The record gives the reactivity of an RNA of 177 nucleotides to DMS and 2A3.
The reactions ran in a buffer of 150 mM KOAc, 10 mM MgCl2 and 150 mM bicine (pH 8.5), at 24 C.
For 2A3, 1,223 sequencing reads were counted.
[RMDB]
RNA sequence: GGGAACGACUCGAGUAGAGUCGAAAAUUGUACACACCGCCCGUCACGUCAUGGGAGCCGAGGGUGCCCGAAGCCGCCACGAUUCAGUGGUGUCCACGGCAAGAUCGGUGACUGGGACGAAGUCGUAGCAAGAAUAUCUCUUCGGAGAUAUUCUUGCAAAAGAAACAACAACAACAAC
Reactivity to DMS in 0.01 (KOAc 150mM, MgCl2 10mM, bicine 150mM(pH8.5), 24C), signal-to-noise 2, nucleotides 027 to 126: u000u000g010u000a040c050a030c100a170c030c090g040c030c030c010g000u010c060a120c040g000u000c050a090u010g000g000g000a300g020c010c000g030a010g000g030g020u000g010c000c000c000g030a130a180g010c030c010g010c020c030a000c000g010a180u000u000c180a090g050u010g010g000u010g000u000c010c000a300c300g000g020c010a010a050g010a180u000c010g010g030u000g000a300c000u000g010g000g000a010c030g000a050a060g040u000c070g010u020a180
Reactivity to 2A3 in 0.01 (KOAc 150mM, MgCl2 10mM, bicine 150mM(pH8.5), 24C), signal-to-noise 1, nucleotides 027 to 126: u040u050g120u180a050c040a000c000a030c100c080g080c050c020c000g070u020c030a070c060g020u070c010a070u050g000g000g040a000g000c010c000g000a040g030g000g010u010g040c030c040c010g020a000a000g000c000c000g030c000c020a000c010g120a100u290u220c070a050g000u000g000g010u020g000u000c010c000a000c010g000g000c030a000a000g060a070u000c000g000g000u010g020a000c020u010g040g010g000a010c030g060a140a000g160u150c070g000u060a010